[RMDB]
RNA sequence: GGGAACGACUCGAGUAGAGUCGAAAACAGCGUUUAUAUAUAGAUGUAGGAGGAUCUGUUUGGGAAGUAAGAAGCCCCUUUGACAUCUCUUCAUCUGCAAAUAAUUCUCGAUGUGAAAACACAGAGCUACGAACUACCGGUUCGCCGGUAGUUCGUAAAAAGAAACAACAACAACAAC
Reactivity to 2A3 in 0.01 (KOAc 150mM, MgCl2 10mM, bicine 150mM(pH8.5), 24C), signal-to-noise 2, nucleotides 027 to 126: c070a010g080c000g050u010u270u000a070u000a020u000a000u100a050g000a040u000g220u290a020g020g080a010g060g000a090u060c000u020g000u100u040u190g020g000g110a000a090g000u270a140a230g010a050a080g130c000c000c000c000u000u040u300g050a030c030a100u020c000u000c000u030u000c000a010u000c000u050g000c010a240a070a000u000a070a080u170u030c000u000c020g020a070u050g040u010g060a080a030a050a110c020a020c080a030g060a000g010c100